[RMDB]
RNA sequence: GGGAACGACUCGAGUAGAGUCGAAAACUAACGACCAUCUGUUACCUCAAGGUGAGGGAACUUAAGAAUUGGAAUUGGCUACUCGGAAUGUUUGAUCGUCUGAGACUACCCCAACCCAUAUCUUCGUGCAUCACUGUGUGUCUUUCGGAUGGAGGGCCUUCGUGAAAAGGUUCGCCUUUUCACGAAGAAAAGAAACAACAACAACAAC
Reactivity to 2A3 in 0.01 (KOAc 150mM, MgCl2 10mM, bicine 150mM(pH8.5), 24C), signal-to-noise 5, nucleotides 027 to 156: c040u080a040a050c030g080a070c010c010a020u020c020u030g050u050u030a050c010c000u010c070a140a090g070g020u070g050a020g010g020g020a020a010c020u110u110a090a020g050a090a070u070u050g000g050a040a070u060u020g020g000c020u030a040c010u020c030g010g060a090a080u090g130u110u190u190g130a150u230c050g030u010c040u020g040a040g010a170c050u090a060c010c010c000c000a010a010c030c000c010a000u050a070u060c030u060u030c040g060u040g040c010a030u040c010a010c030u030g010u010g020u010g020u140c060u010u070u070c020g000g020a020u020g000g010a020g010g030g000c000
Reactivity to DMS in 0.01 (KOAc 150mM, MgCl2 10mM, bicine 150mM(pH8.5), 24C), signal-to-noise 2, nucleotides 027 to 156: c050u010a080a080c050g030a120c010c000a010u000c040u010g020u020u020a040c020c030u000c020a080a170g010g000u020g010a030g000g030g010a060a040c050u000u010a070a100g020a020a300u010u010g010g020a280a080u000u000g040g050c000u000a050c030u000c020g030g010a040a080u000g010u000u000u000g030a170u000c070g010u000c050u000g000a110g020a130c030u000a060c070c010c040c000a070a100c010c000c000a090u000a080u000c020u000u000c060g040u000g020c000a060u010c030a070c050u010g030u020g000u010g000u000c050u000u010u010c020g030g000a080u010g000g000a100g000g010g030c010
This 207-nucleotide RNA was probed chemically with 2A3 and DMS. Reactivities are given for positions 27 through 156. For 2A3 the reverse transcriptase was SuperScript II with manganese. Conditions: 150 mM KOAc, 10 mM MgCl2 and 150 mM bicine (pH 8.5), 24 C.